Structure probing data (2A3 and DMS) for a 177-nucleotide construct. Reactivities are rounded to 0.1 and cut off at 0 and 3. 2A3 adducts were read by reverse transcription with SuperScript II with manganese.
RNA sequence: GGGAACGACUCGAGUAGAGUCGAAAAAUGGACGUCCAGGUCACCAUGCCGGUGCCCGAGCCGAUGGUGAAGAUGCUGCUCAACAACGUCCUGGAGCAUCUCGCCGAAAAUCUCAAGCAGCGCGCCGCUGCCCCUGUCUUUUCGAAGACAGGGGCAGAAAAGAAACAACAACAACAAC
Reactivity to 2A3 in 0.01 (KOAc 150mM, MgCl2 10mM, bicine 150mM(pH8.5), 24C), signal-to-noise 8, nucleotides 027 to 126: a010u150g020g010a020c020g020u040c020c030a020g010g040u050c040a020c040c010a030u160g140c100c040g030g010u040g000c000c020c020g010a020g010c010c020g060a080u100g000g010u010g030a080a020g020a030u040g010c010u020g050c020u050c070a050a140c030a060a050c100g070u060c030c020u020g030g020a020g000c000a010u020c010u020c030g030c020c000g040a070a070a050a060u080c040u030c050a050a070g000c030a010g020c030g000c000g010c030c010g020
Reactivity to DMS in 0.01 (KOAc 150mM, MgCl2 10mM, bicine 150mM(pH8.5), 24C), signal-to-noise 4, nucleotides 027 to 126: a090u020g000g010a030c010g010u000c040c060a060g000g030u010c060a070c070c030a070u020g000c210c060g000g010u020g000c030c050c020g000a110g020c040c090g000a080u010g000g020u000g000a060a070g010a020u000g000c020u010g000c050u000c100a110a080c240a120a090c080g000u020c030c050u020g000g010a030g010c020a080u010c020u000c020g010c020c010g000a030a030a100a040u020c050u000c030a100a070g000c040a050g000c020g000c030g000c030c050g030